[RMDB]
RNA sequence: GGGAACGACUCGAGUAGAGUCGAAAAAUGGGAACGGCGCUAGCAACAAACAUAUUUUAUGUACCUCACGUGUUUGACUUAAUCAUUUACUGGUUAAAGUCUGUUCAGUGCAAUCGUAGGACUUCUACCUGAUUAGUCCAUUCGUGGACUAAUCAGGAAAAGAAACAACAACAACAAC
Reactivity to DMS in 0.01 (KOAc 150mM, MgCl2 10mM, bicine 150mM(pH8.5), 24C), signal-to-noise 3, nucleotides 027 to 126: a060u020g000g000g010a060a070c080g030g020c020g010c050u020a070g000c060a120a050c080a020a110a010c060a080u010a050u010u030u030u020a040u010g010u000a100c040c020u000c070a070c130g010u000g000u000u020u010g000a060c040u020u010a010a020u000c020a010u020u010u030a100c180u000g010g010u030u000a010a030a050g010u000c010u000g020u000u010c080a070g020u000g000c100a040a060u060c080g010u000a030g000g020a070c110u000u000c020u000a170
Reactivity to 2A3 in 0.01 (KOAc 150mM, MgCl2 10mM, bicine 150mM(pH8.5), 24C), signal-to-noise 7, nucleotides 027 to 126: a010u080g020g020g030a020a060c030g030g000c010g000c040u050a030g040c030a010a040c020a060a150a030c040a030u120a140u070u140u140u140a100u120g030u050a090c010c030u050c020a080c050g030u020g040u070u160u120g010a000c000u000u010a010a010u000c010a030u070u130u300a140c140u020g000g030u010u020a110a040a030g010u000c000u020g040u070u070c060a050g030u010g060c030a040a040u070c070g040u050a060g040g050a040c010u030u000c020u070a080